[RMDB]
RNA sequence: GGGAACGACUCGAGUAGAGUCGAAAACUUCAUAUAUAUUCCAUUUGUGUUCCAUGUGUUUAUAUAAAUGAACUACGUGGGUCAAAAAAUGGAUAAAGAAAAUUAAGGAGAUAUAUUACUUUAUUUCCCGCGUAUAGAUUUUCGAAUCUAUACGCGGAAAAGAAACAACAACAACAAC
Reactivity to 2A3 in 0.01 (KOAc 150mM, MgCl2 10mM, bicine 150mM(pH8.5), 24C), signal-to-noise 1, nucleotides 027 to 126: c020u180u130c020a040u010a060u100a020u000a060u210u070c000c000a000u000u000u010g090u020g030u030u000c000c010a000u110g000u000g010u000u020u000a010u010a060u020a150a300a200u170g000a000a000c020u000a010c130g010u000g010g000g020u020c000a030a030a030a030a030a030u000g000g000a000u010a020a020a010g020a000a140a000a000u150u170a040a200g060g000a040g080a020u040a020u010a140u180u160a130c040u030u120u000a050u060u010u040c010
Background
The data come from the RNA Mapping Database (RMDB), library RFM100. Chemical mapping of a 177-nucleotide RNA with 2A3. The reactions ran in a buffer of 150 mM KOAc, 10 mM MgCl2 and 150 mM bicine (pH 8.5), at 24 C. Reactivities are given for positions 27 through 126.